RNA sequence: GGGAACGACUCGAGUAGAGUCGAAAAAAGGUGCAAUUGACGCACUGAAACGUAUCGGUCAGGUAAAAGAUGAAAACAUUACCGUUGUUUGGGUGCCUGGUGCCUAUGAGCUGCCGCUGGCGGCGGGGGAUAUUAUUCAGUUCGCUGAAUAAUAUCCAAAAGAAACAACAACAACAAC
Reactivity to 2A3 in 0.01 (KOAc 150mM, MgCl2 10mM, bicine 150mM(pH8.5), 24C), signal-to-noise 6, nucleotides 027 to 126: a000a000g060g000u050g010c050a140a200u190u110g080a060c100g000c000a010c000u000g000a020a010a010c060g010u080a080u150c030g020g030u050c040a030g030g060u080a050a060a070a070g110a110u190g120a050a090a020a020c030a030u050u090a040c040c020g040u060u080g040u040u080u040g080g000g010u010g020c010c010u040g040g020u040g020c010c000u080a100u090g080a040g010c020u030g010c010c030g270c300u160g050g010c020g000g000c050g010g010g030
Reactivity to DMS in 0.01 (KOAc 150mM, MgCl2 10mM, bicine 150mM(pH8.5), 24C), signal-to-noise 9, nucleotides 027 to 126: a100a080g000g020u000g010c010a110a120u010u010g010a140c230g010c000a010c010u000g000a030a040a050c070g010u000a040u010c040g010g000u000c130a050g010g010u000a040a040a090a110g010a130u010g010a100a060a070a070c070a070u010u000a040c050c040g000u000u010g000u000u000u000g010g010g020u000g010c020c040u010g010g020u000g010c010c010u000a080u000g000a120g010c010u000g020c010c010g010c180u000g010g020c030g020g020c020g000g010g010